[RMDB]
RNA sequence: GGGAACGACUCGAGUAGAGUCGAAAACGCUGGGCUAAAUACUGUCCAUAGGGAGCUGAAGCGCGCACGGCGAAGAACUAUGGCUAGUUCUUAGCCUGUGCUGAAGCGCGCACGGCAACCGAAAGGUGCGAAAGUACCAGGCUUCGGCCUGGUACAAUACAUGAUUUACCUUCGGGUAAAUCAUGUAAAAAGAAACAACAACAACAAC
Reactivity to 2A3 in 0.01 (KOAc 150mM, MgCl2 10mM, bicine 150mM(pH8.5), 24C), signal-to-noise 3, nucleotides 027 to 156: c040g050c070u080g010g020g000c060u120a060a160a110u220a190c120u080g010u020c000c020a010u060a040g020g000g000a020g010c010u040g030a220a010g000c000g000c000g040c020a010c030g020g000c020g010a030a000g010a040a000c040u040a070u270g300g000c040u020a010g010u000u050c020u020u010a000g000c000c030u030g050u040g000c010u030g050a080a020g010c010g000c010g000c030a020c010g020g000c020a030a010c000c010g040a030a020a030g130g030u110g030c010g090a180a050a020g000u000a000c000c000a010g000g000c000u000u080c250g100g000c000c010u000g010g000u000a000c000a000a000
Reactivity to DMS in 0.01 (KOAc 150mM, MgCl2 10mM, bicine 150mM(pH8.5), 24C), signal-to-noise 2, nucleotides 027 to 156: c070g040c150u000g020g060g040c020u010a010a070a110u010a080c070u000g040u000c020c040a070u000a160g020g000g050a300g010c020u020g000a050a060g000c020g000c010g040c010a190c090g000g000c000g020a080a060g030a020a040c030u020a040u000g070g040c300u000a040g030u000u000c000u010u000a140g010c000c000u040g020u000g030c090u000g020a100a170g010c030g010c000g050c030a230c030g040g020c010a050a230c040c020g030a030a140a150g000g030u020g030c000g000a110a080a130g010u010a030c000c000a010g010g010c000u010u000c300g030g020c000c000u000g000g000u000a000c010a050a090

The record gives the reactivity of an RNA of 207 nucleotides to 2A3 and DMS. The DMS profile rests on 2,972 reads. Source: RMDB library RNAMAK, as collected in RNAgym.